[RMDB]
RNA sequence: GGGAACGACUCGAGUAGAGUCGAAAAGCGGAGCGAAAUUGAUGGAAUCUGUAGAUCUAAAUCUGGAUAGAUUGUUCGAUAGAUCGAUGCAACCAAUUUUGGUGAACAAACGGAACAGAAUAUCAUUCAGCUCAGCCAACCGUGCUAUCACCAAAGGCCAUCCGCUAGAUUUCGAUCUAGCGGAUGGAAAAGAAACAACAACAACAAC
Reactivity to DMS in 0.01 (KOAc 150mM, MgCl2 10mM, bicine 150mM(pH8.5), 24C), signal-to-noise 2, nucleotides 027 to 156: g020c030g070g000a100g040c010g020a020a070a110u000u000g020a070u020g050g040a160a180u000c000u020g030u000a140g030a040u000c020u000a020a050a080u000c020u030g040g000a120u010a100g010a070u010u000g000u020u000c030g020a240u010a030g020a050u000c060g000a150u000g020c050a060a180c030c010a020a260u000u010u010u000g010g000u000g000a080a160c060a080a110a100c050g010g000a060a080c010a160g020a040a070u000a070u000c060a100u000u000c030a150g020c000u000c010a030g030c000c020a130a150c010c000g000u000g000c020u010a100u010c030a030c030c010a020a060a080g040g000
Reactivity to 2A3 in 0.01 (KOAc 150mM, MgCl2 10mM, bicine 150mM(pH8.5), 24C), signal-to-noise 4, nucleotides 027 to 156: g040c030g020g020a010g000c030g030a050a030a080u130u100g030a050u060g010g120a110a110u030c010u060g030u090a050g010a040u010c020u070a130a090a020u020c060u130g060g030a020u020a150g150a140u040u170g050u080u080c050g030a040u020a060g010a010u010c020g020a020u110g040c060a070a050c010c020a030a040u080u130u150u130g020g000u010g020a030a020c030a120a130a010c050g050g010a010a010c020a010g050a090a040u120a060u180c050a030u090u060c030a030g000c030u040c070a010g010c000c020a020a020c000c020g010u020g040c020u080a090u120c030a010c050c000a040a020a040g040g000